Structure probing data (DMS) for a 177-nucleotide construct. Conditions: 150 mM KOAc, 10 mM MgCl2 and 150 mM bicine (pH 8.5), 24 C.

RNA sequence: GGGAACGACUCGAGUAGAGUCGAAAAUUGUGUGUGGCGUUCUGCGACCGGCCUGGCGGGCCAUAGGGGCCCACCAGCGGACCCCCACGGUCCGCCGGCCUGCUAGCCCGGCCAUGAGCUCGCGGUGCCUAGGGGGUGAAUUCGUUCACCCCCUAGGAAAAGAAACAACAACAACAAC
Reactivity to DMS in 0.01 (KOAc 150mM, MgCl2 10mM, bicine 150mM(pH8.5), 24C), signal-to-noise 1, nucleotides 027 to 126: u010u120g030u000g060u000g000u020g000g000c120g020u050u040c070u000g000c000g020a110c300c080g060g040c020c020u020g110g000c000g000g000g000c010c020a100u050a140g020g010g000g000c000c000c010a090c140c260a080g000c250g020g010a050c050c070c020c010c050a070c090g000g000u000c000c000g000c020c000g020g000c000c020u010g010c030u010a100g000c000c060c000g010g000c010c080a070u020g000a150g050c160u020c020g000c000g000g000u010g020
The DMS profile rests on 1,465 reads.
For DMS the reverse transcriptase was MarathonRT.